[RMDB]
RNA sequence: GGGAACGACUCGAGUAGAGUCGAAAAAGGCGGUUACGAUGUAUGGUCGAGCACUUGGUACCUCGUUCCCGUACGGAAACCAUCCUCCGGACACAGCCGGCGUACGGAAACCAUCCAGCGAUGCUCGGUAUCUCAUUAAUGGAUGGGAAAGCAUGCCUACGGCUAUAUCGUUCGCGAUAUAGCCGUAAAAAGAAACAACAACAACAAC
Reactivity to DMS in 0.01 (KOAc 150mM, MgCl2 10mM, bicine 150mM(pH8.5), 24C), signal-to-noise 1, nucleotides 027 to 156: a060g010g000c080g010g050u010u010a050c010g010a120u000g030u000a090u000g010g010u000c000g010a100g010c020a040c090u000u000g060g010u000a060c050c010u000c040g020u000u000c010c000c000g000u000a050c020g030g000a120a100a090c020c020a070u000c050c070u000c060c040g000g010a200c120a080c110a080g020c010c020g070g000c050g020u000a090c020g000g010a130a060a050c000c040a070u000c010c010a000g010c170g010a100u000g000c010u000c010g000g020u010a020u010c030u030c030a120u000u000a110a150u000g010g000a060u010g010g010g000a050a110a160g010c030a100u010g000c040c020
Reactivity to 2A3 in 0.01 (KOAc 150mM, MgCl2 10mM, bicine 150mM(pH8.5), 24C), signal-to-noise 1, nucleotides 027 to 156: a000g060g000c030g030g020u130u020a030c040g040a060u060g020u100a030u080g100g020u100c000g000a000g070c020a030c150u170u270g030g000u060a070c010c020u030c010g010u040u000c000c000c000g000u000a000c020g060g090a130a020a040c040c010a040u080c010c050u000c040c030g090g020a070c070a020c020a140g120c010c010g020g000c010g010u050a020c060g050g000a020a020a020c050c000a020u020c000c000a020g020c010g130a120u030g010c000u000c000g000g020u050a060u030c070u000c030a070u030u110a070a100u050g000g000a030u000g000g050g000a120a000a000g070c050a010u140g050c000c030